[RMDB]
RNA sequence: GGGAACGACUCGAGUAGAGUCGAAAACUUGACUGUCAAACAGGUCACAAGGAGGACAAAAAGUGUCCUUGCAUCGUAUGAAAAGAGUUGCUUGAAAUCACAGAAUACCCUCUAUUAAUUGCUAAAAUCCAAUUUCCACCUGAAGACAUGCCUCCAAAUUUAUCACGCUGUUCGCAGCGUGAUAAAUAAAAGAAACAACAACAACAAC
Reactivity to 2A3 in 0.01 (KOAc 150mM, MgCl2 10mM, bicine 150mM(pH8.5), 24C), signal-to-noise 3, nucleotides 027 to 156: c030u070u090g010a030c010u020g030u110c020a050a180a170c000a080g010g050u060c040a000c040a150a060g050g020a020g020g010a060c090a050a120a050a050a060g070u040g010u050c010c000u000u020g000c010a040u020c020g100u100a070u220g150a090a120a020a020g100a020g010u050u020g040c010u040u030g060a080a110a050u150c010a010c030a030g080a070a010u040a100c000c020c000u000c010u030a080u140u110a140a090u070u060g000c010u020a100a030a080a100u050c030c000a020a070u070u030u000c020c010a030c010c010u040g020a030a010g010a010c020a020u050g000c010c000u010c000c010a030a160
Reactivity to DMS in 0.01 (KOAc 150mM, MgCl2 10mM, bicine 150mM(pH8.5), 24C), signal-to-noise 2, nucleotides 027 to 156: c050u000u000g000a100c000u000g020u000c040a070a100a230c070a160g040g010u000c040a090c110a100a120g010g010a120g040g050a210c100a040a110a040a130a150g040u000g040u000c030c000u000u000g040c050a110u010c060g050u000a140u010g000a150a090a110a130g010a140g000u000u000g000c030u000u000g000a020a050a060u010c070a060c040a000g010a150a060u000a080c000c000c000u000c010u010a120u000u010a040a080u000u000g010c040u000a040a050a060a070u000c030c040a040a190u000u000u000c060c030a110c060c000u000g010a100a100g010a080c000a010u000g010c000c000u010c010c000a030a080
The data come from the RNA Mapping Database (RMDB), library OK3TST.
Structure probing data (2A3 and DMS) for a 207-nucleotide construct.
Conditions: 150 mM KOAc, 10 mM MgCl2 and 150 mM bicine (pH 8.5), 24 C.